Chemical mapping of a 177-nucleotide RNA with DMS and 2A3. For DMS, 1,175 sequencing reads were counted. The data come from the RNA Mapping Database (RMDB), library OK1LIB. The RNA was probed in 150 mM KOAc, 10 mM MgCl2 and 150 mM bicine (pH 8.5) at 24 C.
[RMDB]
RNA sequence: GGGAACGACUCGAGUAGAGUCGAAAAGGGAACACUGCCAGGACACAUGACAGAGAGGUUUCAGGAAGCCAUUGACAACCUCGCCGUGCUCAUGCGAGCAGAGACUGGAAGCAGGCCUUAUAAGGCACCAGCAAACUGACUUCGGUCAGUUUGCUGGAAAAGAAACAACAACAACAAC
Reactivity to DMS in 0.01 (KOAc 150mM, MgCl2 10mM, bicine 150mM(pH8.5), 24C), signal-to-noise 1, nucleotides 027 to 126: g010g010g000a030a060c170a030c070u000g000c000c110a120g000g000a230c230a070c080a080u020g000a020c130a070g000a000g030a000g000g020u080u000u000c020a130g050g040a200a080g000c080c030a130u070u000g000a100c160a050a050c020c000u000c000g010c000c090g000u030g040c010u000c020a060u010g020c150g000a180g000c060a000g020a090g010a170c070u030g020g000a020a080g010c170a040g000g000c000c020u000u000a140u020a150a090g000g000c050a180
Reactivity to 2A3 in 0.01 (KOAc 150mM, MgCl2 10mM, bicine 150mM(pH8.5), 24C), signal-to-noise 1, nucleotides 027 to 126: g100g000g010a060a000c050a000c040u030g000c000c030a060g030g000a040c020a000c000a040u090g020a060c000a000g090a000g000a000g000g000u000u000u000c000a000g010g030a060a060g010c000c000a060u000u240g000a000c140a070a000c030c000u060c000g070c010c000g150u070g000c010u010c060a030u110g020c030g030a030g000c000a000g040a000g040a030c020u000g010g000a010a010g050c080a000g140g000c010c000u260u060a080u070a100a010g000g000c010a000